Background:
Chemical mapping of a 177-nucleotide RNA with 2A3 and DMS.
RNA sequence: GGGAACGACUCGAGUAGAGUCGAAAACUCAUGGUAGAGCGGUUUGUGUCUUUGGCUAUAGAUGCUUACCCUCUCACAAAGCAUGAAGAUAUAGAAUACCAGAAUGUAUUCUGGGUCUACUUACAGUCCUGAAUUAUAGGUUCGCCUAUAAUUCAGGAAAAGAAACAACAACAACAAC
Reactivity to 2A3 in 0.01 (KOAc 150mM, MgCl2 10mM, bicine 150mM(pH8.5), 24C), signal-to-noise 4, nucleotides 027 to 126: c000u010c010a020u040g060g010u120a000g000a010g050c140g000g020u010u010u020g010u010g000u000c010u040u100u110g130g010c020u030a020u070a210g010a010u000g000c000u010u010a000c000c000c000u000c000u000c010a030c010a030a140a010g100c020a030u070g060a090a040g060a030u080a010u020a160g070a060a040u080a300c010c020a030g060a070a060u120g070u200a200u050u020c000u000g000g000g040u000c000u030a090c030u100u100a040c040a040g060u010
Reactivity to DMS in 0.01 (KOAc 150mM, MgCl2 10mM, bicine 150mM(pH8.5), 24C), signal-to-noise 2, nucleotides 027 to 126: c040u000c000a070u000g010g010u000a000g000a010g050c300g010g000u000u000u010g030u000g030u000c010u000u020u000g010g030c260u010a090u000a060g000a020u020g000c010u000u000a020c000c000c000u000c010u000c100a090c140a110a090a160g000c050a070u000g000a030a050g000a110u000a170u010a030g000a030a040u020a090c010c080a060g040a040a030u000g010u000a110u000u000c000u020g020g000g000u000c020u000a070c080u000u000a100c170a110g000u000

Record summary
It was measured as part of the RMDB library 15KREP.